[RMDB]
RNA sequence: GGGAACGACUCGAGUAGAGUCGAAAAGCUCUGUAAUGGGAUGGGAUCCGAAGCCCCAUUGAGGGAUAAUACAGGCUCUGCCAUCCAACUCCUAUUCCAACACGUCCUCGUCGUACAGAGUGGUAACUAAGGUAUAGCUCCUUCGGGAGCUAUACAAGAUACGUGCGUUCUUCGGAACGCACGUAUCAAAAGAAACAACAACAACAAC
Reactivity to 2A3 in 0.01 (KOAc 150mM, MgCl2 10mM, bicine 150mM(pH8.5), 24C), signal-to-noise 1, nucleotides 027 to 156: g010c000u030c000u000g050u060a130a210u070g170g010g030a000u000g000g000g030a060u190c000c070g010a020a040g040c000c000c000c060a210u090u140g130a300g000g000g010a020u040a180a110u210a100c030a030g000g000c010u010c010u090g000c000c000a000u010c000c020a010a030c000u030c020c030u070a090u100u000c000c000a030a000c050a020c100g040u050c000c040u110c090g060u060c030g000u000a000c020a000g020a000g010u090g010g060u100a070a060c040u060a070a150g120g000u000a000u000a000g010c000u000c000c010u000u020c020g130g000g000a050g060c000u000a000u000a000c000a000a000